The record gives the reactivity of an RNA of 177 nucleotides to 2A3 and DMS. Reactivities are given for positions 27 through 126. For DMS the reverse transcriptase was MarathonRT. The RNA was probed in 150 mM KOAc, 10 mM MgCl2 and 150 mM bicine (pH 8.5) at 24 C. For 2A3 the reverse transcriptase was SuperScript II with manganese. The data come from the RNA Mapping Database (RMDB), library OK1LIB.
RNA sequence: GGGAACGACUCGAGUAGAGUCGAAAAAAGAACCUUCAGGAGGCCGAGGAAUGGUACAAGUCCAAGUUUGCCGACCUCUCUGAGGCUGCUAACCGGAACAAUGAUGCCCUGCGCCAGGCGAAGCAGGCUCCAAUCCGUACUUCGGUACGGAUUGGAGAAAAGAAACAACAACAACAAC
Reactivity to 2A3 in 0.01 (KOAc 150mM, MgCl2 10mM, bicine 150mM(pH8.5), 24C), signal-to-noise 3, nucleotides 027 to 126: a000a000g100a070a070c010c000u070u070c020a000g020g010a010g020g030c020c050g060a110g030g070a070a050u070g020g000u210a150c060a180a050g070u000c030c000a060a070g040u040u070u130g220c010c010g100a150c000c000u010c000u000c020u030g000a010g050g000c010u040g030c010u040a050a020c010c030g000g100a040a020c090a090a190u270g010a060u070g120c000c000c010u030g010c000g010c030c020a110g000g060c020g010a020a000g020c010a000g000g000
Reactivity to DMS in 0.01 (KOAc 150mM, MgCl2 10mM, bicine 150mM(pH8.5), 24C), signal-to-noise 1, nucleotides 027 to 126: a050a000g000a080a110c050c000u030u050c000a020g050g000a040g010g080c030c080g020a150g000g020a060a070u020g000g000u020a080c180a110a020g010u000c030c070a100a210g000u000u000u030g010c090c050g030a120c020c010u000c020u070c000u040g000a060g000g000c000u000g020c000u000a130a100c020c030g000g000a020a020c230a060a060u020g000a040u100g020c060c000c010u000g000c060g020c010c000a090g010g010c090g090a060a130g000c080a030g000g010